Record summary: Structure probing data (DMS and 2A3) for a 177-nucleotide construct. For DMS, 2,534 sequencing reads were counted.
RNA sequence: GGGAACGACUCGAGUAGAGUCGAAAAGAUAUGGAGGGACUAAGACAUGCUGCUACCUCGGAAACGAGGUAUUAGCAACAGCUUACCCUCCUAAGUCAAAGAACACCUCGGUUCGCCGAGGUGUUCACAAAAACUACACCUUCGGGUGUAGUUUUUGAAAAGAAACAACAACAACAAC
Reactivity to DMS in 0.01 (KOAc 150mM, MgCl2 10mM, bicine 150mM(pH8.5), 24C), signal-to-noise 2, nucleotides 027 to 126: g010a030u000a110u020g000g000a050g000g030g010a180c200u010a000a010g000a020c040a300u010g010c010u000g010c130u010a010c000c000u010c010g010g000a030a030a050c010g000a010g020g010u000a000u010u000a010g010c000a090a040c190a130g000c000u000u000a040c010c000c000u000c000c000u000a010a030g010u000c020a120a180a120g000a010a000c010a000c010c000u000c010g000g010u010u000c290g020c000c010g010a000g000g020u000g000u000u000c000a090
Reactivity to 2A3 in 0.01 (KOAc 150mM, MgCl2 10mM, bicine 150mM(pH8.5), 24C), signal-to-noise 1, nucleotides 027 to 126: g010a000u000a000u090g010g000a020g000g030g000a030c200u050a020a000g020a020c100a290u300g040c000u000g030c000u000a000c000c000u020c000g000g000a030a030a010c000g000a010g000g020u010a000u000u030a000g000c020a100a070c040a060g070c010u000u010a020c000c010c000u020c000c000u000a010a000g000u030c000a060a000a180g000a000a000c000a000c030c010u010c020g050g080u070u080c300g070c130c000g000a000g000g000u010g000u020u000c000a000
For 2A3 the reverse transcriptase was SuperScript II with manganese.